RNA sequence: GGGAACGACUCGAGUAGAGUCGAAAAUUCGUCCCUUAAACGUUCCUCCAAGGGUCCUCUCCCCAAUCCCUUACUUUGUAAGUUUGGAUCGGCGAGUGUACCGUUUCGUCCUUUCGGACUCAUCAGGCAAAGUUAUCUCGUUCGCGAGAUAACUUUGAAAAGAAACAACAACAACAAC
Reactivity to DMS in 0.01 (KOAc 150mM, MgCl2 10mM, bicine 150mM(pH8.5), 24C), signal-to-noise 2, nucleotides 027 to 126: u000u010c170g010u010c000c000c000u010u000a060a140a300c030g020u000u000c000c000u010c110c070a140a110g000g000g000u000c060c000u000c010u000c020c080c010c030a060a040u000c010c010c010u000u010a020c010u000u000u020g000u000a030a030g000u000u020u000g010g010a020u000c090g020g020c280g000a030g000u000g020u000a010c020c030g020u000u000u020c110g000u000c010c020u000u000u020c170g010g000a030c010u000c120a080u000c170a080g010g000
Reactivity to 2A3 in 0.01 (KOAc 150mM, MgCl2 10mM, bicine 150mM(pH8.5), 24C), signal-to-noise 1, nucleotides 027 to 126: u110u080c080g050u000c030c010c050u030u220a210a200a010c000g010u010u000c000c000u030c020c030a000a040g110g000g000u020c000c000u000c000u030c020c020c020c020a020a020u010c000c000c000u020u040a000c020u180u080u110g020u110a030a040g050u050u190u140g010g020a020u000c020g000g000c050g000a000g000u040g040u020a000c000c030g020u060u090u080c030g010u040c040c030u060u240u130c100g000g020a030c020u040c090a090u180c050a040g110g000